[RMDB]
RNA sequence: GGGAACGACUCGAGUAGAGUCGAAAAUCGUGUACAACUUCAUCCACUAUAAAAAUCUAACGCUCCGGCUCUCCGGGCGUGGGGAGGACACGGCCGCCUUCCCGGACAGAGGAUCGACAGACAAGAGUGUAUGAACUGGAUUCGUCCAGUUCAUACAAAAAGAAACAACAACAACAAC
Reactivity to DMS in 0.01 (KOAc 150mM, MgCl2 10mM, bicine 150mM(pH8.5), 24C), signal-to-noise 2, nucleotides 027 to 126: u000c050g010u000g000u000a110c110a040a080c070u000u000c030a060u000c030c020a160c100u020a130u030a030a080a090a100a120u000c070u010a200a090c090g020c010u020c020c010g000g020c270u000c300u010c030c030g000g010g020c100g010u000g000g020g000g000a000g010g000a030c030a060c060g010g010c040c100g010c030c040u000u000c000c000c000g020g000a030c100a040g020a170g000g010a050u010c050g000a050c110a080g000a040c120a040a130g000a060g010
Reactivity to 2A3 in 0.01 (KOAc 150mM, MgCl2 10mM, bicine 150mM(pH8.5), 24C), signal-to-noise 1, nucleotides 027 to 126: u040c020g020u020g010u050a120c020a120a000c100u070u060c040a050u020c030c020a020c070u070a040u130a300a150a070a020a040u000c060u090a070a060c050g030c040u080c090c000g100g040c060u040c020u070c100c000g010g040g000c010g000u010g000g020g000g020a010g020g000a010c000a010c080g130g020c080c000g000c020c000u030u000c000c000c010g000g010a010c040a040g050a070g000g000a020u080c080g050a060c030a060g090a020c020a010a130g120a040g170